Chemical mapping of a 207-nucleotide RNA with 2A3.
RNA sequence: GGGAACGACUCGAGUAGAGUCGAAAAGCCAGCCACCUUCUGCAGGGAGCAUGCUCAGAGAGUAGGAGAUCUGACGACUGCUACGGUAUCAGACAUGGAGAUGCAGCGUUUGGAGUUUGCCCAGCUGGUUUCCUGUCUUGCUAUUGGGAUUACAAUACCCGAUAAAUGGAUUCGUCCAUUUAUCGGGAAAAGAAACAACAACAACAAC
Reactivity to 2A3 in 0.01 (KOAc 150mM, MgCl2 10mM, bicine 150mM(pH8.5), 24C), signal-to-noise 3, nucleotides 027 to 156: g030c000c000a000g040c030c020a040c040c010u070u120c040u170g040c030a040g030g020g010a010g050c020a030u060g010c020u010c020a000g030a010g000a030g060u100a070g020g080a050g010a120u020c000u030g030a040c080g060a080c030u040g000c030u060a060c030g010g000u050a060u150c040a000g050a060c000a060u180g050g020a040g000a000u130g190c020a020g000c010g080u090u180u240g040g010a070g010u080u280u090g120c000c010c000a010g000c010u010g010g000u000u000u000c000c010u000g010u030c020u040u080g020c030u040a060u100u130g000g000g050a040u290u280a010c010a020a040u280a170
2A3 adducts were read by reverse transcription with SuperScript II with manganese. The RNA was probed in 150 mM KOAc, 10 mM MgCl2 and 150 mM bicine (pH 8.5) at 24 C. It was measured as part of the RMDB library OK3TST. For 2A3, 1,584 sequencing reads were counted.